[RMDB]
RNA sequence: GGGAACGACUCGAGUAGAGUCGAAAAUUUGUGUUUUGUGGCCUGCACCUCGAGUGUGACCCACAAACAGCGUAAGAGCCAGCCGCCGCAGGGAGUAUUCGCCUGCGGAAGAACCCUGUUAGCUUACCAAAAUGUUGGCUUUCGAGCCAACAUUUUGAAAAGAAACAACAACAACAAC
Reactivity to 2A3 in 0.01 (KOAc 150mM, MgCl2 10mM, bicine 150mM(pH8.5), 24C), signal-to-noise 3, nucleotides 027 to 126: u080u040u120g160u010g000u010u040u040u050g020u010g000g000c010c080u100g010c020a010c010c010u210c170g060a290g040u010g000u040g040a110c000c010c000a000c000a000a030a010c000a010g050c030g040u030a050a000g020a000g020c000c000a010g010c000c010g000c000c000g000c000a000g010g050g020a060g040u150a240u260u120c120g070c110c000u010g000c000g010g000a000a010g000a000a000c000c000c000u000g020u010u140a010g010c000u010u000a010c020
Reactivity to DMS in 0.01 (KOAc 150mM, MgCl2 10mM, bicine 150mM(pH8.5), 24C), signal-to-noise 2, nucleotides 027 to 126: u040u060u000g000u000g000u030u030u000u020g010u000g000g000c240c020u110g020c000a060c070c010u030c290g000a110g010u000g030u040g000a140c300c030c010a020c010a040a000a040c070a020g030c140g000u010a110a050g000a040g000c120c060a030g000c050c230g040c030c030g010c000a010g000g000g020a070g060u000a110u030u000c080g000c010c000u020g020c030g000g020a010a000g000a200a010c040c220c000u000g000u000u110a090g020c010u050u000a120c070

Structure probing data (2A3 and DMS) for a 177-nucleotide construct. For DMS the reverse transcriptase was MarathonRT. For DMS, 1,669 sequencing reads were counted. 2A3 adducts were read by reverse transcription with SuperScript II with manganese. The 2A3 profile rests on 1,368 reads. The RNA was probed in 150 mM KOAc, 10 mM MgCl2 and 150 mM bicine (pH 8.5) at 24 C.